[RMDB]
RNA sequence: GGGAACGACUCGAGUAGAGUCGAAAACGUGUCUGGCGGCGACCGUGGUCGUUGCGGGGUGGUGGACGCCGCCGGCGUGGGCGAUCGGGCCGCCGGUGGUGGACGCCGCCGCGCAACCGCCCAGCGGAGCGAUAAUGACGUUCGCGUCAUUAUCGCUAAAAGAAACAACAACAACAAC
Reactivity to DMS in 0.01 (KOAc 150mM, MgCl2 10mM, bicine 150mM(pH8.5), 24C), signal-to-noise 2, nucleotides 027 to 126: c050g010u000g010u020c030u000g010g020c040g010g010c040g010a250c010c030g020u010g010g000u000c300g000u000u000g020c000g010g000g000g010u000g010g010u000g020g010a030c010g000c010c000g010c000c000g010g010c000g000u010g020g000g030c010g010a160u000c170g010g000g000c050c010g020c000c000g010g010u000g010g010u010g000g010a040c030g000c000c020g020c010c010g000c010g010c000a020a030c050c090g030c010c010c080a080g010c040g000g000
Reactivity to 2A3 in 0.01 (KOAc 150mM, MgCl2 10mM, bicine 150mM(pH8.5), 24C), signal-to-noise 1, nucleotides 027 to 126: c020g020u030g020u020c020u020g030g000c000g000g020c000g040a030c000c030g040u070g010g000u030c010g010u000u030g010c010g020g090g000g020u050g030g000u040g010g010a010c040g000c050c050g020c000c010g030g000c050g080u160g100g180g030c050g070a270u160c120g050g190g000c000c000g000c010c000g000g000u000g000g010u000g010g000a010c000g000c010c000g010c000c010g000c000g000c010a000a010c000c010g000c000c000c010a010g020c030g040g020